[RMDB]
Conditions: 150 mM KOAc, 10 mM MgCl2 and 150 mM bicine (pH 8.5), 24 C. Chemical mapping of a 177-nucleotide RNA with 2A3 and DMS. For 2A3 the reverse transcriptase was SuperScript II with manganese.
RNA sequence: GGGAACGACUCGAGUAGAGUCGAAAAGAAUGUAAGAGCGUAAUCGCGCCUUGACGUGAGUGAGACAAGACAGAAUGCUAUCCAAAGUAAGAUAGCAUAGCUCACAAUACGCUGAUCUGUCCUAGAAGCGUAUUAUGCACUUCGGUGCAUAAUACGCAAAAGAAACAACAACAACAAC
Reactivity to 2A3 in 0.01 (KOAc 150mM, MgCl2 10mM, bicine 150mM(pH8.5), 24C), signal-to-noise 2, nucleotides 027 to 126: g040a040a020u180g000u080a110a000g020a080g120c010g000u040a170a000u020c030g000c000g000c020c070u050u290g080a120c010g000u000g040a020g000u010g000a010g000a020c100a270a000g020a020c010a040g090a140a000u020g010c000u000a010u040c000c040a090a070a000g120u070a000a150g070a020u000a000g000c000a000u000a020g000c000u000c000a000c000a010a050u040a020c000g000c000u000g000a050u040c020u070g020u000c000c000u040a040g050a160a040
Reactivity to DMS in 0.01 (KOAc 150mM, MgCl2 10mM, bicine 150mM(pH8.5), 24C), signal-to-noise 2, nucleotides 027 to 126: g030a030a050u040g000u070a050a060g000a060g000c000g060u000a040a300u000c090g010c000g100c000c190u160u020g000a150c000g020u000g040a060g030u000g000a000g000a040c080a140a090g000a050c280a020g020a040a040u000g030c060u010a030u000c010c100a110a080a280g000u060a180a090g030a050u000a000g000c010a000u000a020g010c000u000c050a030c040a130a160u000a010c000g000c000u000g000a110u020c040u010g000u030c000c010u000a070g000a170a070
DMS (dimethyl sulfate) methylates the pairing face of unpaired adenines and cytosines.